Structure probing data (2A3 and DMS) for a 177-nucleotide construct. For 2A3, 4,316 sequencing reads were counted. The DMS profile rests on 1,639 reads.
[RMDB]
RNA sequence: GGGAACGACUCGAGUAGAGUCGAAAAGAUAUGGAGUCGAUCAGGGAGCUGCGGAUCGGAAACGAUCCACAGCGAAGAACUGACCGACUCCUAAGUCAAAACCGGCCCUGGUUCGCCAGGGCCGGAAGUGAAUGUACUUGUUCGCAAGUACAUUCACAAAAGAAACAACAACAACAAC
Reactivity to 2A3 in 0.01 (KOAc 150mM, MgCl2 10mM, bicine 150mM(pH8.5), 24C), signal-to-noise 1, nucleotides 027 to 126: g000a000u030a000u080g000g000a010g020u020c010g000a020u000c010a010g040g060g190a300g050c010u020g030c030g000g010a010u010c000g000g000a020a010a000c000g000a000u010c000c010a010c030a010g000c010g000a040a030g010a060a010c000u000g000a000c000c000g010a000c000u000c000c000u000a000a000g010u000c000a010a020a120a180c010c000g000g000c030c000c000u040g050g000u010u100c300g030c060c010a000g040g000g000c000c000g000g000a010a000
Reactivity to DMS in 0.01 (KOAc 150mM, MgCl2 10mM, bicine 150mM(pH8.5), 24C), signal-to-noise 1, nucleotides 027 to 126: g020a030u010a090u020g000g010a030g010u000c000g010a010u010c000a000g030g000g000a300g010c000u000g040c030g020g010a000u000c000g040g000a040a030a050c010g010a000u010c000c010a000c000a000g030c000g020a110a150g010a190a190c000u000g030a000c000c000g020a020c000u000c000c000u000a030a060g010u000c010a120a060a100a130c000c010g020g010c020c010c030u000g020g010u020u020c280g000c010c000a010g000g000g020c030c000g000g000a020a050
Annotation
High DMS reactivity at an A or C suggests that its Watson-Crick edge is free.